This 207-nucleotide RNA was probed chemically with 2A3. For 2A3 the reverse transcriptase was SuperScript II with manganese. For 2A3, 650 sequencing reads were counted. The RNA was probed in 150 mM KOAc, 10 mM MgCl2 and 150 mM bicine (pH 8.5) at 24 C.
RNA sequence: GGGAACGACUCGAGUAGAGUCGAAAAGUGAAGAAGAGACUAGACUUGAUCAUUGAGCAGCCACUCACUGAUAUCUUCAGUGCUGCAUGAGGAAGGACUGGCCCCUGGGAUUUUCUGCUCAGGACCCGAGUUCACUGAGACAUCAGGAGCAAGCACAUAAUUAGUCACCGUUCGCGGUGACUAAUUAAAAAGAAACAACAACAACAAC
Reactivity to 2A3 in 0.01 (KOAc 150mM, MgCl2 10mM, bicine 150mM(pH8.5), 24C), signal-to-noise 1, nucleotides 027 to 156: g040u060g030a010a050g020a060a030g010a010g000a050c030u060a060g020a070c000u090u070g040a080u050c030a140u050u100g040a010g010c040a030g060c060c070a040c050u140c010a060c010u010g000a010u070a140u100c050u070u070c070a000g020u010g050c010u010g000c020a040u090g010a010g070g020a030a020g010g020a020c020u000g040g020c100c000c000c000u000g000g000g030a000u020u160u120u130c080u190g050c030u020c020a010g060g000a030c030c010c040g030a030g040u010u030c040a030c120u020g000a010g020a010c030a050u020c000a040g000g030a010g000c070a040a010g000c020a020c000a060